[RMDB]
The record gives the reactivity of an RNA of 177 nucleotides to DMS and 2A3. Conditions: 150 mM KOAc, 10 mM MgCl2 and 150 mM bicine (pH 8.5), 24 C. For 2A3 the reverse transcriptase was SuperScript II with manganese. The data come from the RNA Mapping Database (RMDB), library 15KREP. For DMS the reverse transcriptase was MarathonRT.
RNA sequence: GGGAACGACUCGAGUAGAGUCGAAAAUUCGAUCCGGACCGGCUCAUCUCGGCAAAGGGCGGCAGUCCUCAGUACUCUUACUCUUUCCUAUAAAGAGGAGACUGCUGGACUCGCCGCCCGAGCCCGACGCGUAGAUAAUGUUCGCAUUAUCUACGCGAAAAGAAACAACAACAACAAC
Reactivity to DMS in 0.01 (KOAc 150mM, MgCl2 10mM, bicine 150mM(pH8.5), 24C), signal-to-noise 1, nucleotides 027 to 126: u000u000c050g000a070u000c090c030g000g020a100c070c030g010g000c070u020c000a090u000c040u000c000g010g000c040a020a100a120g000g010g010c010g000g020c000a010g010u000c000c010u000c000a000g010u000a120c090u000c000u000u010a300c010u000c000u010u000u000c230c140u030a140u040a000a000a020g000a000g010g000a040g010a010c000u010g020c290u000g010g000a000c000u000c160g040c030c010g000c000c000c000g010a010g030c060c000c020g000a080
Reactivity to 2A3 in 0.01 (KOAc 150mM, MgCl2 10mM, bicine 150mM(pH8.5), 24C), signal-to-noise 1, nucleotides 027 to 126: u010u000c000g030a000u000c020c030g020g030a000c000c000g010g010c030u010c030a090u000c020u030c000g000g000c020a040a060a080g020g010g010c020g000g000c000a000g020u010c010c000u000c010a020g010u080a280c000u010c030u110u110a200c000u050c000u030u100u050c050c080u140a120u180a300a010a000g000a020g000g020a020g000a000c000u020g050c140u000g000g000a000c010u010c060g000c000c000g000c000c020c010g000a000g010c000c000c000g000a010